The record gives the reactivity of an RNA of 177 nucleotides to 2A3 and DMS. Source: RMDB library OK2TRN, as collected in RNAgym.
RNA sequence: GGGAACGACUCGAGUAGAGUCGAAAAGUCUAGCGAAAGGAUCCCACCCGGGAGACACGCAAGUCGCGAAUUACGCCGACCGGCCAAGGUCAAUAGCAGAACUCAACUGCAUGAGUAAGCUAGACGACCUCAGUAGCCUAUUCGUAGGCUACUGAGGAAAAGAAACAACAACAACAAC
Reactivity to 2A3 in 0.01 (KOAc 150mM, MgCl2 10mM, bicine 150mM(pH8.5), 24C), signal-to-noise 2, nucleotides 027 to 126: g000u010c000u000a000g000c000g040a060a080a000g160g030a060u040c000c000c010a020c030c010c000g000g000g000a080g000a010c020a010c080g000c060a060a060g230u200c050g030c010g030a130a200u230u080a120c060g000c080c030g000a010c010c020g030g000c000c000a040a010g020g000u020c020a000a080u060a110g000c020a010g040a270a100c060u080c150a080a130c020u030g000c020a040u070g000a010g100u060a030a030g000c000u010a010g000a010c000g040a020
Reactivity to DMS in 0.01 (KOAc 150mM, MgCl2 10mM, bicine 150mM(pH8.5), 24C), signal-to-noise 2, nucleotides 027 to 126: g010u010c010u000a010g000c010g000a040a080a190g000g010a060u020c010c000c040a120c300c030c060g000g000g000a100g000a030c050a130c070g020c010a040a100g010u010c160g020c030g010a170a070u010u010a030c220g000c030c030g010a090c000c100g000g000c050c050a210a070g000g010u000c000a030a120u010a120g000c000a030g020a090a100c150u000c130a050a100c000u000g010c050a160u000g000a060g000u010a160a130g000c030u000a000g000a030c050g000a120
The RNA was probed in 150 mM KOAc, 10 mM MgCl2 and 150 mM bicine (pH 8.5) at 24 C. Reactivities are given for positions 27 through 126.